[RMDB]
RNA sequence: GGGAACGACUCGAGUAGAGUCGAAAAAGACCACCUCUACGGAGGUGGUCAAGUCACGUAGCUAGGACCAGGUUGCAAUACUAGAGCGUUAGUCCUGGGGCGUACGGUGGCAGUACGCUGCCACCGAUAAAACUUGAAUACUUCGGUAUUCAAGUAACUUGGUACUAUACUUCGGUAUAGUACCAAGAAAAGAAACAACAACAACAAC
Reactivity to DMS in 0.01 (KOAc 150mM, MgCl2 10mM, bicine 150mM(pH8.5), 24C), signal-to-noise 2, nucleotides 027 to 156: a070g000a020c000c000a010c020c000u000c030u000a110c300g070g000a060g030g010u000g000g010u000c000a000a030g020u010c100a130c030g000u000a090g040c020u010a040g030g020a080c000c020a110g030g000u010u010g000c030a110a120u000a110c030u000a030g030a250g020c050g000u000u000a060g020u000c000c010u000g000g010g010g000c110g030u000a090c000g000g000u010g000g000c020a080g020u010a110c300g030c020u000g010c000c010a010c010c000g000a020u000a040a080a100a060c000u000u000g000a010a020u000a000c000u000u000c300g020g020u000a000u000u000c010a000a020g000u000a010a010
Reactivity to 2A3 in 0.01 (KOAc 150mM, MgCl2 10mM, bicine 150mM(pH8.5), 24C), signal-to-noise 2, nucleotides 027 to 156: a000g000a000c000c000a000c030c000u010c020u010a070c300g090g000a000g000g000u000g010g000u000c000a000a000g020u010c000a000c020g000u000a020g100c030u010a010g000g040a050c020c020a030g000g010u060u050g030c030a060a060u030a150c020u030a040g000a010g050c090g070u140u150a020g050u100c000c000u020g000g010g030g020c100g070u120a020c020g000g000u000g000g000c000a000g010u040a010c230g010c060u000g010c000c000a000c000c000g000a000u010a000a070a000a020c000u010u000g000a000a000u000a000c010u020u020c100g100g000u010a010u000u000c010a000a000g000u000a020a050